[RMDB]
RNA sequence: GGGAACGACUCGAGUAGAGUCGAAAAGAUAUGGAAUCUCGGUUUCAAUCAUCGAUCGAAAUUCGGAAACGAAUUUCGGGAGAUUGGCCGAGGAUUCCUAAGUCAAAGUGCGCCUUCGGGCGCACAACAUUCAACAGACGUUCGCGUCUGUUGAAUGAAAAGAAACAACAACAACAAC
Reactivity to 2A3 in 0.01 (KOAc 150mM, MgCl2 10mM, bicine 150mM(pH8.5), 24C), signal-to-noise 1, nucleotides 027 to 126: g000a000u080a070u160g020g020a000a000u000c000u020c010g000g070u120u300u300c040a040a010u040c080a120u300c010g120a080u050c000g000a000a030a000u000u010c000g000g000a070a050a070c010g000a000a010u000u010u010c010g000g020g000a060g010a010u020u020g020g000c040c000g010a050g060g010a000u000u040c000c000u000a110a030g040u010c050a210a010a100g000u000g000c000g000c000c030u040u130c300g130g000g030c000g000c000a000c000a010a010
Reactivity to DMS in 0.01 (KOAc 150mM, MgCl2 10mM, bicine 150mM(pH8.5), 24C), signal-to-noise 2, nucleotides 027 to 126: g020a060u010a300u000g000g000a020a000u000c010u000c000g020g030u000u010u010c000a000a030u000c020a300u000c180g000a120u000c000g010a010a020a000u000u020c000g010g000a050a110a260c000g000a000a000u000u000u010c000g000g000g000a080g010a010u000u010g010g000c000c010g020a000g000g000a010u000u000c000c000u000a030a170g000u000c020a100a190a190g000u000g000c000g000c000c000u000u020c300g030g000g020c000g000c000a020c000a040a130
This 177-nucleotide RNA was probed chemically with 2A3 and DMS.
The 2A3 profile rests on 1,991 reads.
Conditions: 150 mM KOAc, 10 mM MgCl2 and 150 mM bicine (pH 8.5), 24 C.
It was measured as part of the RMDB library TTRDES.